[RMDB]
RNA sequence: GGGAACGACUCGAGUAGAGUCGAAAAAGGCACACUUCUAUAUCAUUUUACAAACAGAGUGACAGAGAGGUUCACCUCUGAGCUCUGUUAGUGAACGCAGAGCUUACAGGUGAAGCGUAGUAAGAACUGCGUUCAUAGUUCUGUGUAUGCUGUGCCACCUACCCAGUCACUUCGGUGACUGGGUAGGAAAAGAAACAACAACAACAAC
Reactivity to 2A3 in 0.01 (KOAc 150mM, MgCl2 10mM, bicine 150mM(pH8.5), 24C), signal-to-noise 1, nucleotides 027 to 156: a000g000g000c000a000c000a000c040u090u030c080u110a120u080a090u120c040a070u140u180u120u130a050c020a010a040a030c010a000g000a010g060u060g100a250c010a030g060a000g000a020g110g030u270u220c110a120c080c000u000c000u000g000a000g000c000u020c050u000g000u000u050a010g000u000g030a000a000c010g000c000a000g010a030g000c000u000u000a010c030a020g100g110u300g150a040a010g150c010g030u070a030g020u000a030a010g000a120a000c000u000g010c000g020u000u040c000a000u000a040g030u010u080c030u050g050u000g020u060a000u120g060c050u040g000u000g000c000c000a000

The data come from the RNA Mapping Database (RMDB), library OK3TST.
An RNA of 207 nucleotides, treated with 2A3 and read out base by base.
The RNA was probed in 150 mM KOAc, 10 mM MgCl2 and 150 mM bicine (pH 8.5) at 24 C.
As a SHAPE reagent, 2A3 marks flexible, mostly unpaired nucleotides at the ribose 2'-OH.
2A3 adducts were read by reverse transcription with SuperScript II with manganese.
Values cover nucleotides 27 to 156.